[RMDB]
RNA sequence: GGGAACGACUCGAGUAGAGUCGAAAAGAACUCGUAAAUCCACUGUUGCAACUUUCUAUAGUUGCCAAUGACGAAAACUACGGUGCUCAACUAGCUGCGUAAGCAGCCUAGCCGCACUUCUGGUAGCUUCGGCUCCAGCAAUCAUCAGGGGAUGCCUAGGAAGAAGAUACUUCGGUAUCUUCUUCCUAAAAGAAACAACAACAACAAC
Reactivity to 2A3 in 0.01 (KOAc 150mM, MgCl2 10mM, bicine 150mM(pH8.5), 24C), signal-to-noise 2, nucleotides 027 to 156: g030a060a020c060u030c100g050u150a060a080a110u040c020c030a030c050u090g030u100u100g010c000a000a000c000u020u200u170c140u300a190u180a120g010u010u000g000c030c010a000a070u090g060a020c040g070a000a070a090a070c110u160a080c080g000g020u000g000c010u040c090a030a070c000u000a000g030c000u000g030c000g100u120a190a120g000c000a000g070c050c000u000a000g020c020c030g010c010a000c000u060u020c000u050g040g060u150a000g000c010u040u050c200g070g000c000u000c000c000a030g040c060a030a170u040c030a000u000c020a040g000g010g010g010a010u060g090c020c020u030
Chemical mapping of a 207-nucleotide RNA with 2A3. Source: RMDB library ARCHII, as collected in RNAgym. 2A3 adducts were read by reverse transcription with SuperScript II with manganese. The reactions ran in a buffer of 150 mM KOAc, 10 mM MgCl2 and 150 mM bicine (pH 8.5), at 24 C. Values cover nucleotides 27 to 156.